[RMDB]
RNA sequence: GGGAACGACUCGAGUAGAGUCGAAAAGCUAGUUUCGACUAGCAAAAAACCUUUGUGGCUAACUAUCAUUGGGAGUUUGAUAUCUCCCAUUGGGAGAUGUUUGAACGAAGAACAAUGACGAAUUAGCCACUCUGGUAAAAAGACGCUUCGGCGUCAACAUGCACAUCCCAUUCGUGGGAUGUGCAUGAAAAGAAACAACAACAACAAC
Reactivity to 2A3 in 0.01 (KOAc 150mM, MgCl2 10mM, bicine 150mM(pH8.5), 24C), signal-to-noise 1, nucleotides 027 to 156: g000c000u020a000g010u030u160u120c200g080a060c020u010a000g000c000a000a000a000a250a000a120c000c010u000u000u000g000u010g040g010c010u000a000a010c010u000a000u070c000a000u000u010g040g000g000a040g050u010u040u020g060a050u040a000u000c000u000c000c000c000a050u000u200g020g010g000a000g000a000u000g170u060u110u150g020a040a030c030g180a190a070g040a010a040c000a000a000u020g010a010c050g020a230a300u030u010a000g000c030c000a000c000u000c000u000g000g000u070a000a000a000a120a050g000a000c010g000c000u070u100c230g170g020c000g000u000c010a000a020